[RMDB]
The record gives the reactivity of an RNA of 177 nucleotides to DMS. It was measured as part of the RMDB library OK2TST. Reactivities are given for positions 27 through 126.
RNA sequence: GGGAACGACUCGAGUAGAGUCGAAAACGAUGUUUUGGACUUGUGUUUAAGCGGCGUGUGUUGAGCUUUUGCAGGGACACUAGUAUUUCCAAUUUGAGAACCAGUUUGUGAAGUGUUUUCCGCAGUGGGACACAGAUAUCUUCGGAUAUCUGUGUCCAAAAGAAACAACAACAACAAC
Reactivity to DMS in 0.01 (KOAc 150mM, MgCl2 10mM, bicine 150mM(pH8.5), 24C), signal-to-noise 1, nucleotides 027 to 126: c060g020a120u000g010u000u000u010u010g000g010a060c090u000u010g000u020g020u000u010u000a020a110g010c030g010g020c060g010u000g000u000g010u000u010g000a150g010c040u000u000u010u000g020c040a090g010g000g020a050c040a020c040u010a030g010u000a090u000u010u000c000c020a090a160u010u000u000g020a110g000a090a160c080c040a050g000u000u000u000g010u010g020a070a050g010u000g010u000u000u000u000c020c050g010c150a120g030u000g010

DMS adducts were read by reverse transcription with MarathonRT. The RNA was probed in 150 mM KOAc, 10 mM MgCl2 and 150 mM bicine (pH 8.5) at 24 C.